Chemical mapping of a 177-nucleotide RNA with 2A3 and DMS. The reactions ran in a buffer of 150 mM KOAc, 10 mM MgCl2 and 150 mM bicine (pH 8.5), at 24 C. Source: RMDB library OK2TRN, as collected in RNAgym. The DMS profile rests on 2,007 reads. For DMS the reverse transcriptase was MarathonRT.
RNA sequence: GGGAACGACUCGAGUAGAGUCGAAAACGUGCAGUGGCACAAUCUCAGCUCACUGCAACCUUGGGUUCAAGUGAUUCUCCUGCCUCAGUCUCCCAAGUAGCUGGGACCACAGGCAUGUGCCACCACACCAAGCAUUGAGGUUCGCCUCAAUGCUUGGAAAAGAAACAACAACAACAAC
Reactivity to 2A3 in 0.01 (KOAc 150mM, MgCl2 10mM, bicine 150mM(pH8.5), 24C), signal-to-noise 3, nucleotides 027 to 126: c070g030u030g060c080a030g030u010g010g000c020a050c020a110a160u040c040u000c030a020g010c010u010c020a090c080u100g020c030a000a010c000c030u050u150g230g000g010u070u100c090a130a080g030u070g080a100u140u060c040u020c070c030u030g000c000c000u080c000a070g070u000c030u000c070c030c010a060a020g090u080a010g070c040u000g000g000g020a030c020c000a100c050a050g020g060c090a050u050g010u030g000c000c010a010c000c000a010c000a000
Reactivity to DMS in 0.01 (KOAc 150mM, MgCl2 10mM, bicine 150mM(pH8.5), 24C), signal-to-noise 2, nucleotides 027 to 126: c180g020u010g020c080a080g020u010g010g000c070a050c080a030a110u000c050u000c070a060g010c210u000c030a040c050u010g010c130a050a020c090c010u000u010g050g030g020u000u000c100a100a040g010u010g020a000u000u000c020u000c000c070u000g010c050c000u000c050a030g010u000c070u000c000c020c010a060a130g010u010a100g030c040u000g010g000g010a030c050c080a030c080a040g010g000c090a090u000g010u000g010c000c020a050c000c020a040c020a260